[RMDB]
RNA sequence: GGGAACGACUCGAGUAGAGUCGAAAAAAAACUGGGACCCUGGAAAAGACCAGUUGCCUACCUAUCAAAAAAACUGGAUACAGUGGCAUCUGGAUGGCCCCCUUGUUUACGCAUGGUUGCAGCCAUCCCUGUACUCAGGAUUCGUCCUGAGUACAGGAAAAGAAACAACAACAACAAC
Reactivity to 2A3 in 0.01 (KOAc 150mM, MgCl2 10mM, bicine 150mM(pH8.5), 24C), signal-to-noise 4, nucleotides 027 to 126: a000a000a000a000c010u020g020g020g040a030c000c000c010u050g110g040a110a090a010a000g070a070c000c010a000g000u000u010g030c010c000u020a050c020c000u120a130u120c140a040a060a080a110a090a060a040c090u110g110g010a050u060a080c030a030g010u030g020g020c010a010u010c010u040g020g050a040u010g040g020c000c010c020c000c030u000u030g030u100u140u100a060c060g030c030a030u090g020g010u100u130g080c030a020g010c010c000a010u020c020
Reactivity to DMS in 0.01 (KOAc 150mM, MgCl2 10mM, bicine 150mM(pH8.5), 24C), signal-to-noise 2, nucleotides 027 to 126: a030a030a050a030c010u000g000g020g000a080c020c010c020u020g020g000a110a060a060a060g050a120c020c010a030g000u030u000g020c050c010u020a140c150c080u000a050u010c020a000a000a080a170a030a090a050c170u000g000g000a080u010a030c160a110g010u000g000g030c060a020u000c040u000g030g010a050u010g000g000c030c030c070c000c000u000u000g000u000u030u010a060c180g000c030a030u020g000g020u000u020g020c140a100g000c020c020a030u020c040